[RMDB]
RNA sequence: GGGAACGACUCGAGUAGAGUCGAAAACGGCGCGGUCGAAGUUCAGGGGACGGCUGAUCGACUGUUUAUCGGCCCUGCUGAUUGGUGUCGAAGCCUCGUCCCGCAGGAUCAGUGGUGAUGGGGCCCUGACUGGAGGGUCAGGGUAAACCAUCUUAGUCUAUAACAAGACGUUCGCGUCUUGUUAUAGAAAAGAAACAACAACAACAAC
Reactivity to DMS in 0.01 (KOAc 150mM, MgCl2 10mM, bicine 150mM(pH8.5), 24C), signal-to-noise 1, nucleotides 027 to 156: c070g000g010c040g030c040g000g050u000c020g010a140a150g020u000u000c030a170g020g040g010g020a060c000g020g000c040u010g010a110u010c020g000a040c010u000g050u000u010u000a100u000c010g040g040c010c100c060u010g030c020u000g000a110u010u000g020g000u000g030u010c020g010a070a150g000c020c000u010c050g010u000c010c010c050g030c060a080g000g030a080u000c060a110g030u000g000g010u000g010a050u000g000g070g000g000c000c010c020u000g000a020c010u000g010g050a250g000g040g020u000c000a040g020g000g010u000a020a060a090c010c010a070u000c000u010u010a050g000u000
Reactivity to 2A3 in 0.01 (KOAc 150mM, MgCl2 10mM, bicine 150mM(pH8.5), 24C), signal-to-noise 6, nucleotides 027 to 156: c050g030g010c050g010c030g090g000u030c030g030a090a030g040u130u150c080a070g020g020g020g030a020c010g020g010c010u040g030a110u050c000g030a050c020u040g060u130u170u080a170u020c000g020g000c020c080c140u100g000c020u010g010a120u090u100g080g040u090g030u030c010g010a030a010g020c000c020u050c050g030u020c000c010c010g000c020a030g010g070a060u090c030a040g050u040g060g050u080g020a010u000g000g030g000g000c000c000c000u000g000a010c010u030g070g110a130g130g090g000u000c000a000g020g000g000u020a050a020a010c000c000a000u000c000u000u080a040g010u000